The record gives the reactivity of an RNA of 177 nucleotides to 2A3 and DMS. The DMS profile rests on 2,671 reads. The RNA was probed in 150 mM KOAc, 10 mM MgCl2 and 150 mM bicine (pH 8.5) at 24 C. For 2A3 the reverse transcriptase was SuperScript II with manganese. For 2A3, 1,414 sequencing reads were counted. It was measured as part of the RMDB library M2PK50.
RNA sequence: GGGAACGACUCGAGUAGAGUCGAAAAAUGCACUGGUUCGCCAGUGCAUGAUUACCGUGAAAGUACCUCGGUAUAAAAGUGCAACCCUUGGAAACAAGGGAAUUCCGAACCGAUUCGUCGGUUCGAAUUACAAAACUGCUUUCGAGCAGUUUUGUAAAAAAGAAACAACAACAACAAC
Reactivity to 2A3 in 0.01 (KOAc 150mM, MgCl2 10mM, bicine 150mM(pH8.5), 24C), signal-to-noise 1, nucleotides 027 to 126: a000u010g020c000a000c030u000g000g040u030u020c120g080c070c020a000g000u000g010c010a000u010g000a000u000u020a010c000c000g030u030g140a300a070a050g040u080a070c000c050u010c020g020g070u040a050u070a070a130a030a000g100u080g110c050a120a170c010c000c000u000u000g040g000a050a040a010c010a000a000g020g000g100a010a000u020u000c040c010g000a000a010c010c000g000a030u020u070c220g020u000c010g030g000u000u000c000g000a000a000
Reactivity to DMS in 0.01 (KOAc 150mM, MgCl2 10mM, bicine 150mM(pH8.5), 24C), signal-to-noise 3, nucleotides 027 to 126: a030u000g010c000a000c000u010g000g010u000u030c240g030c010c000a010g000u000g000c010a000u000g020a150u000u010a040c000c000g030u000g010a080a040a090g010u000a120c060c000u010c030g000g010u000a030u020a020a070a080a080g020u010g010c200a130a130c000c000c000u000u000g000g000a130a090a200c000a000a000g000g000g000a040a020u020u000c080c020g010a000a000c000c000g010a020u010u010c200g040u000c000g020g000u000u000c010g010a000a010